[RMDB]
RNA sequence: GGGAACGACUCGAGUAGAGUCGAAAAUAAGCAAGAAUGAUACCGGCAUAGAGUUUGCAGAUAAUGAUAAACAAGAUAUAUAUACUCUAUUUCAGCAAACUGGUAGAAUAGUCCAUAGCAACCUAAAGUCUGGCCCUUGAUUCGUCAGGGGCCGGACAAAAGAAACAACAACAACAAC
Reactivity to 2A3 in 0.01 (KOAc 150mM, MgCl2 10mM, bicine 150mM(pH8.5), 24C), signal-to-noise 2, nucleotides 027 to 126: u070a030a000g020c020a000a060g030a100a080u080g050a010u010a050c010c000g060g000c050a070u050a090g110a020g050u020u040u090g040c020a000g040a170u120a120a040u160g030a020u110a140a090a030c040a080a010g010a040u090a020u030a020u000a010u070a300c010u000c020u030a060u020u120u060c030a020g000c000a010a050a010c030u040g000g070u020a000g070a050a030u030a050g010u010c040c020a030u100a020g000c000a010a060c000c010u050a080a060a050
Reactivity to DMS in 0.01 (KOAc 150mM, MgCl2 10mM, bicine 150mM(pH8.5), 24C), signal-to-noise 2, nucleotides 027 to 126: u000a090a140g000c010a150a110g000a090a060u000g000a230u000a050c020c020g010g050c110a040u000a100g000a040g010u010u000u000g010c040a080g010a040u010a040a060u000g000a070u020a060a080a150c060a060a130g010a090u010a110u000a090u010a060u000a110c080u000c010u000a050u010u000u000c080a060g010c040a030a060a060c020u000g000g020u000a010g000a110a070u000a060g000u000c030c050a060u000a040g020c040a050a100c020c010u000a030a060a190
An RNA of 177 nucleotides, treated with 2A3 and DMS and read out base by base. The RNA was probed in 150 mM KOAc, 10 mM MgCl2 and 150 mM bicine (pH 8.5) at 24 C. 2A3 adducts were read by reverse transcription with SuperScript II with manganese. The DMS profile rests on 1,936 reads. Reactivities are given for positions 27 through 126.